[RMDB]
RNA sequence: GGGAACGACUCGAGUAGAGUCGAAAAUGACCAGCUCCUACCUCCUCUGGGAAAGCGACAGGAGGACAGAUGUGUCAGAUCCUGGGCGAUGCCUCCACAGCUUCCGAAAACUCAGGGACUACGCUGCGAAACGUUGUAAAUUCGUUUACAACGUUUCAAAAGAAACAACAACAACAAC
Reactivity to DMS in 0.01 (KOAc 150mM, MgCl2 10mM, bicine 150mM(pH8.5), 24C), signal-to-noise 9, nucleotides 027 to 126: u010g010a130c050c020a090g010c040u000c030c030u000a130c050c030u000c020c010u010c070u000g010g000g010a070a080a120g010c060g010a120c160a080g000g010a030g000g000a060c100a060g020a140u010g010u000g010u000c020a070g010a120u000c030c010u000g010g000g000c040g000a100u010g000c040c010u000c030c030a070c100a110g000c040u000u000c040c040g010a070a060a070a110c080u010c050a080g010g000g010a080c090u000a080c130g010c050u000g010c250
Reactivity to 2A3 in 0.01 (KOAc 150mM, MgCl2 10mM, bicine 150mM(pH8.5), 24C), signal-to-noise 8, nucleotides 027 to 126: u100g040a030c010c010a020g010c020u010c000c010u040a110c010c000u020c010c010u050c040u040g020g000g070a100a090a040g080c050g080a060c040a040g010g010a010g030g000a010c030a020g180a120u200g110u040g030u170c000a010g030a190u040c000c010u020g000g040g000c020g040a050u080g020c000c000u030c030c010a050c020a040g000c010u070u010c020c020g040a070a050a030a030c030u040c030a030g000g010g030a010c010u050a030c060g040c050u060g040c020